[RMDB]
RNA sequence: GGGAACGACUCGAGUAGAGUCGAAAAACUCGGCGUCGGGGAAAGGGAAACGGGUUUAUAUUCCCGUACCGCGGUGGUAGGUGCGGCAACGCAAGCCCGAGGGGUGACGCCUCGGGGUAGGCGGACCGGUCCACAAGGCCGGCUAAGCGUAUAAGCCGAAUUGAACUAAGUUCGCUUAGUUCAAUUCAAAAGAAACAACAACAACAAC
Reactivity to DMS in 0.01 (KOAc 150mM, MgCl2 10mM, bicine 150mM(pH8.5), 24C), signal-to-noise 2, nucleotides 027 to 156: a080c030u000c030g040g020c060g000u010c060g000g000g020g000a080a050a090g000g010g000a080a080a090c030g020g000g000u000u000u000a140u000a190u030u000c030c020c000g020u000a020c030c030g030c030g020g020u000g020g020u000a080g040g020u000g020c010g010g040c050a070a060c040g020c020a090a180g000c000c000c040g000a060g000g020g010g030u010g000a100c120g010c010c000u000c010g020g010g040g020u000a030g010g020c010g000g000a030c020c010g030g010u010c020c060a090c300a110a140g010g030c010c000g010g000c010u000a030a110g000c040g020u000a110u000a060a080g030c030c070
Reactivity to 2A3 in 0.01 (KOAc 150mM, MgCl2 10mM, bicine 150mM(pH8.5), 24C), signal-to-noise 4, nucleotides 027 to 156: a000c040u050c040g030g010c050g000u050c030g000g010g000g050a050a100a080g050g020g020a080a100a030c040g010g010g020u030u120u040a180u040a030u090u080c020c010c000g000u010a020c010c010g000c040g040g020u060g030g040u030a050g000g030u050g010c010g010g000c030a090a030c020g000c050a030a050g040c000c000c010g000a010g000g020g000g030u170g060a030c050g040c030c000u000c030g020g000g010g010u040a040g060g000c030g010g020a080c000c000g010g010u000c010c010a070c010a150a050g000g000c000c000g000g000c020u060a050a000g000c000g000u070a100u030a160a040g020c040c040